[RMDB]
RNA sequence: GGGAACGACUCGAGUAGAGUCGAAAACGGAUCAACUUCGGUUGAUCCGAAAGGGACGGGUCGGGAGCGGGAUACUCGCGGUCCCAAGAAGAAUCCAGACUGAAAGGAAGGUCUUCGGACCUUCCAAGAUCUCUAAAUUGUUCGCAAUUUAGAGAUCAAAAGAAACAACAACAACAAC
Reactivity to 2A3 in 0.01 (KOAc 150mM, MgCl2 10mM, bicine 150mM(pH8.5), 24C), signal-to-noise 5, nucleotides 027 to 126: c000g000g000a000u000c000a000a000c010u040u040c150g090g000u000u000g000a000u000c000c000g010a020a000a000g010g010g050a040c070g010g020g100u130c060g030g000g020a060g060c060g010g060g020a070u080a160c020u030c040g040c050g020g020u000c000c000c000a000a020g100a030a010g030a020a050u060c050c030a030g080a110c080u120g080a120a050a040g000g000a000a000g000g000u000c000u010u030c090g020g000a000c000c010u010u000c000c000a000a000
Reactivity to DMS in 0.01 (KOAc 150mM, MgCl2 10mM, bicine 150mM(pH8.5), 24C), signal-to-noise 4, nucleotides 027 to 126: c030g010g010a010u000c000a000a000c000u000u000c170g010g000u000u000g000a000u000c010c000g010a010a040a090g000g010g000a110c090g020g000g010u000c050g020g010g010a100g020c070g010g010g000a170u010a030c020u000c020g010c030g000g000u010c010c000c010a040a080g010a120a080g010a110a080u010c040c030a100g020a160c150u000g020a080a150a110g000g000a010a000g000g010u000c010u000u000c200g020g000a010c000c000u000u000c000c010a010a040
An RNA of 177 nucleotides, treated with 2A3 and DMS and read out base by base.
For 2A3, 11,455 sequencing reads were counted.
2A3 adducts were read by reverse transcription with SuperScript II with manganese.
For DMS the reverse transcriptase was MarathonRT.